[RMDB]
RNA sequence: GGGAACGACUCGAGUAGAGUCGAAAAUCUGAAGGGGCGCGAGGCGACGUACGGCGACUCGGCGGUCUCGGCGUGGACGAAGACGAGUCCGCGAGCCAUCGAGCCGACGAGCAUCCCUUCGUCGUGCUAUGGGUCGGGGAUUCGUCCCCGACCCAUAAAAAGAAACAACAACAACAAC
Reactivity to DMS in 0.01 (KOAc 150mM, MgCl2 10mM, bicine 150mM(pH8.5), 24C), signal-to-noise 2, nucleotides 027 to 126: u010c070u000g000a070a050g010g010g000g020c050g000c060g000a140g010g000c070g010a040c040g010u010a050c070g010g020c050g010a070c000u000c010g010g010c000g020g020u000c020u000c000g020g010c030g000u000g020g000a040c100g000a160a140g010a090c110g000a130g010u010c000c000g010c020g000a030g000c060c100a070u000c020g000a070g000c000c000g010a010c000g000a090g000c090a080u000c010c000c000u000u000c000g010u000c040g010u000g010c150
About this RNA
Source: RMDB library OK2TRN, as collected in RNAgym. The record gives the reactivity of an RNA of 177 nucleotides to DMS. The reactions ran in a buffer of 150 mM KOAc, 10 mM MgCl2 and 150 mM bicine (pH 8.5), at 24 C. Values cover nucleotides 27 to 126.